[RMDB]
An RNA of 177 nucleotides, treated with 2A3 and DMS and read out base by base. For DMS, 660 sequencing reads were counted. The RNA was probed in 150 mM KOAc, 10 mM MgCl2 and 150 mM bicine (pH 8.5) at 24 C.
RNA sequence: GGGAACGACUCGAGUAGAGUCGAAAAUGAUCACUAUGUACCUGACUAUUACAAAAAAAAGCGAGAUGUACAUAAAGCUAAAAGAGAACUGGAUAUAUUACCAGAAGUAGCAACAUUUCGUCAAGCACAUAGCCGUUUUAUUCGUAAAACGGCUAUGAAAAGAAACAACAACAACAAC
Reactivity to 2A3 in 0.01 (KOAc 150mM, MgCl2 10mM, bicine 150mM(pH8.5), 24C), signal-to-noise 1, nucleotides 027 to 126: u050g020a030u060c000a030c160u100a050u130g100u040a050c000c010u020g090a070c040u120a100u250u190a060c130a000a140a080a040a000a020a040a040g010c010g000a010g000a000u010g030u030a050c010a090u170a080a110a000g000c000u010a070a070a070a070g130a050g020a120a040c010u040g000g000a000u060a010u090a090u300u150a010c010c000a000g030a070a040g100u050a000g030c010a000a050c000a000u020u030u000c040g040u080c050a050a000g070c030a000
Reactivity to DMS in 0.01 (KOAc 150mM, MgCl2 10mM, bicine 150mM(pH8.5), 24C), signal-to-noise 1, nucleotides 027 to 126: u010g000a080u040c060a050c040u000a060u000g030u000a040c090c000u010g000a150c100u010a100u000u020a020c040a000a000a000a090a090a100a170a230g010c010g000a000g000a030u000g030u000a050c070a180u000a160a020a120g010c010u000a040a050a050a140g080a100g020a100a210c010u000g000g010a190u000a160u000a100u010u000a090c010c010a050g000a040a070g000u000a010g030c010a150a000c000a030u000u010u000c020g010u000c080a010a130g000c200a180